RNA sequence: GGGAACGACUCGAGUAGAGUCGAAAAGCUGAGUAUACGAGGUUAGUUCAUUCUCGUAUGCAUGAUUGGACAAAUUAAAAUCUCUAUUUGGAUCAGGGCCUCCCUCCAGCGACGGCCGAACAUACAAUCACUAGGUACCAUUCGUGGUACCUAGUGAAAAAGAAACAACAACAACAAC
Reactivity to 2A3 in 0.01 (KOAc 150mM, MgCl2 10mM, bicine 150mM(pH8.5), 24C), signal-to-noise 2, nucleotides 027 to 126: g010c020u030g050a000g030u010a000u000a000c000g020a000g090g060u070u080a070g080u210u300c050a060u140u020c000u010c000g000u010a000u000g040c030a040u040g030a080u070u050g090g030a020c020a060a120a060u180u190a080a180a140a180u160c060u000c020u100a080u090u060u030g130g010a160u050c000a050g040g090g010c000c000u000c000c020c000u060c060c010a020g000c040g010a020c010g010g060c000c000g000a010a000c010a010u210a040c020a020a050
Reactivity to DMS in 0.01 (KOAc 150mM, MgCl2 10mM, bicine 150mM(pH8.5), 24C), signal-to-noise 2, nucleotides 027 to 126: g010c020u000g010a160g020u010a000u010a000c010g010a000g000g010u020u000a140g000u000u010c120a080u010u000c000u000c010g040u000a000u000g000c010a100u000g010a090u010u000g000g000a040c050a020a040a070u010u000a020a070a120a080u010c070u000c110u000a060u000u000u010g010g020a090u000c040a040g010g000g000c020c020u000c010c030c000u010c140c030a030g010c020g020a080c200g000g000c040c040g000a020a020c080a040u010a100c180a020a070